[RMDB]
RNA sequence: GGGAACGACUCGAGUAGAGUCGAAAAGAUAUGGAUGGUACACGCUGAUGACCUAUCGCUAUCGGAAACGAUAGCGAGUAGCAAGGCGCGUACCAUCCUAAGUCAAACGCUAGCUUCGGCUAGCGAAUCUUUCUUCGCGGUUCGCCGCGAAGAAAGAAAAAGAAACAACAACAACAAC
Reactivity to DMS in 0.01 (KOAc 150mM, MgCl2 10mM, bicine 150mM(pH8.5), 24C), signal-to-noise 1, nucleotides 027 to 126: g000a060u000a300u000g030g000a030u010g000g060u000a000c010a000c000g060c000u000g000a300u000g000a270c300c010u000a030u000c000g000c000u000a030u000c010g010g000a260a090a060c000g000a000u000a000g000c030g000a000g000u040a000g000c010a180a180g000g000c000g000c000g000u000a000c000c030a000u000c000c000u000a000a080g000u000c000a250a120a210c010g000c000u000a040g010c000u000u000c240g040g010c000u000a000g000c010g010a000a040